[RMDB]
RNA sequence: GGGAACGACUCGAGUAGAGUCGAAAACAAUCAAGAACCAAAGUGUGGGGAUCGAAGAUGAUUAGAGACCAUUGUAGUCCACACUGCAAACGAUGACACCCAUGAAUUGGGGAGUUUUUGGUCGUAGGCGUGGUCGGGCUUGAUUAUUAUUUUUCAUUAGCCCUUAUGAGUUCGCUCAUAAGGGCUAAAAAGAAACAACAACAACAAC
Reactivity to 2A3 in 0.01 (KOAc 150mM, MgCl2 10mM, bicine 150mM(pH8.5), 24C), signal-to-noise 2, nucleotides 027 to 156: c040a030a010u020c030a030a110g020a170a090c030c040a080a050a150g010u010g020u010g010g040g010g020a010u070c030g050a050a040g010a060u080g010a000u020u090a050g030a030g010a100c000c010a010u060u160g070u070a040g040u010c030c000a010c000a010c040u030g050c010a150a000a000c000g010a020u110g040a000c010a010c080c010c010a070u170g150a110a150u280u070g040g010g050g050a120g110u000u090u050u130u280g060g010u020c000g030u030a010g030g070c050g030u050g010g060u120c090g010g010g000c010u020u020g030a010u000u010a010u150u120a030u070u040u000u030u040c040a020u000
This 207-nucleotide RNA was probed chemically with 2A3. For 2A3 the reverse transcriptase was SuperScript II with manganese. It was measured as part of the RMDB library PDB130. For 2A3, 581 sequencing reads were counted. The reactions ran in a buffer of 150 mM KOAc, 10 mM MgCl2 and 150 mM bicine (pH 8.5), at 24 C. Values cover nucleotides 27 to 156.